[RMDB]
RNA sequence: GGGAACGACUCGAGUAGAGUCGAAAAGAUAUGGACGACUUUCGGGAGCGUUUGGUCGGAAACGACCAGGGCGCAUCGAUCGAACUGGUCGUCCUAAGUCAAACGGCCUAGCUUCGGCUAGGCCGAACCUCUUUAUAUUCUUCGGAAUAUAAAGAGGAAAAGAAACAACAACAACAAC
Reactivity to 2A3 in 0.01 (KOAc 150mM, MgCl2 10mM, bicine 150mM(pH8.5), 24C), signal-to-noise 1, nucleotides 027 to 126: g000a000u040a000u070g000g000a000c010g000a000c020u050u040u040c030g010g050g110a130g010c000g000u010u120u030g000g000u030c000g020g040a010a000a000c000g000a000c010c030a010g030g110g000c020g050c020a100u300c080g070a080u050c000g000a040a030c080u090g000g020u020c010g000u000c000c000u000a000a000g020u000c020a050a090a150c000g020g000c020c000u010a000g000c000u090u070c300g100g070c000u000a050g000g080c040c010g020a000a010
Reactivity to DMS in 0.01 (KOAc 150mM, MgCl2 10mM, bicine 150mM(pH8.5), 24C), signal-to-noise 1, nucleotides 027 to 126: g000a020u000a040u010g000g000a040c000g010a020c010u000u000u020c010g080g000g020a070g060c000g030u000u020u000g010g020u000c000g020g000a030a030a060c000g020a020c010c010a000g000g000g010c010g030c010a230u000c210g000a070u010c020g000a020a040c300u010g030g000u000c000g010u000c010c000u000a000a050g000u000c010a050a080a240c020g030g010c060c010u010a020g030c000u000u000c230g020g000c000u000a000g000g000c000c000g000a020a020